[RMDB]
RNA sequence: GGGAACGACUCGAGUAGAGUCGAAAAGGCAAGAUCGUAAAGCCGCGCCACAUGGGCGGUUUCUUCCUUCGGAACGGAAAAAAUAUCCUGAAAGGCGCGAAUUUCAUCCUGUGUGACAACGCCGUCAGAUUUUAAAUCCAUUCGUGGAUUUAAAAUCAAAAGAAACAACAACAACAAC
Reactivity to DMS in 0.01 (KOAc 150mM, MgCl2 10mM, bicine 150mM(pH8.5), 24C), signal-to-noise 5, nucleotides 027 to 126: g010g020c020a030a040g000a050u000c160g030u010a050a040a060g000c250c010g020c010g000c000c020a080c220a150u010g010g010g010c180g000g010u000u000u000c020u010u000c000c000u000u020c160g000g020a150a110c300g010g000a000a010a040a030a040a050u010a100u000c010c010u000g000a070a160a100g000g010c000g020c000g000a040a130u000u000u000c020a050u000c010c030u000g020u010g020u010g020a050c070a070a060c120g010c030c020g000u020c080a100
Reactivity to 2A3 in 0.01 (KOAc 150mM, MgCl2 10mM, bicine 150mM(pH8.5), 24C), signal-to-noise 2, nucleotides 027 to 126: g060g000c030a020a000g000a110u090c060g150u190a010a060a000g010c020c000g000c000g010c000c000a070c020a090u120g010g040g010c080g020g000u010u030u020c000u010u010c020c000u110u150c110g110g110a070a050c020g020g000a040a030a010a010a000a020u060a040u060c000c010u050g060a110a040a060g000g000c010g000c010g020a030a040u030u050u050c000a020u030c020c010u030g010u000g030u040g080a010c020a070a030c090g040c050c010g030u040c020a000